[RMDB]
RNA sequence: GGGAACGACUCGAGUAGAGUCGAAAAGAUUAUGUGGGAGAGGCGCCCUUUCGUUUCCUCGGAUAAUUAAUUGCCAGUCGCUGGCUUUAGCGAUGUUGAUGUCAUCUGUAGCGAUGACUAUGCUACUUUAAGGUAUGAUCCGGAUACCGCCGGUAAACCAUUACGUAGUGUUCGCACUACGUAAUGGAAAAGAAACAACAACAACAAC
Reactivity to 2A3 in 0.01 (KOAc 150mM, MgCl2 10mM, bicine 150mM(pH8.5), 24C), signal-to-noise 3, nucleotides 027 to 156: g040a020u120u100a050u180g190u080g030g010g010a160g000a010g060g010c020g040c020c040c030u030u060u100c040g030u020u030u010c010c000u020c020g010g010a020u030a050a080u150u110a010a070u180u160g000c000c010a020g050u030c000g000c020u000g030g030c080u150u080u130a010g000c010g010a020u030g040u070u060g070a070u060g000u010c020a000u010c030u050g170u200a060g050c050g060a000u000g010a010c010u020a050u110g010c010u010a040c050u090u160u160a070a060g060g000u060a060u060g060a050u060c020c000g000g010a020u080a070c020c070g000c020c000g010g000u020a070a030a010
Reactivity to DMS in 0.01 (KOAc 150mM, MgCl2 10mM, bicine 150mM(pH8.5), 24C), signal-to-noise 2, nucleotides 027 to 156: g000a120u000u010a060u020g000u000g020g010g010a100g010a080g010g030c060g010c130c050c080u010u000u010c040g010u000u000u000c020c000u000c050g000g000a110u000a040a090u000u000a020a170u000u000g030c000c010a160g040u000c000g050c020u000g020g010c060u000u000u000a050g010c000g020a030u000g030u000u000g000a140u000g010u000c000a050u000c020u000g000u010a090g000c100g020a060u000g020a080c060u000a090u010g020c050u000a070c050u000u000u010a080a060g000g010u010a030u000g000a160u020c010c020g030g030a230u000a060c080c050g020c000c020g020g000u000a050a130a180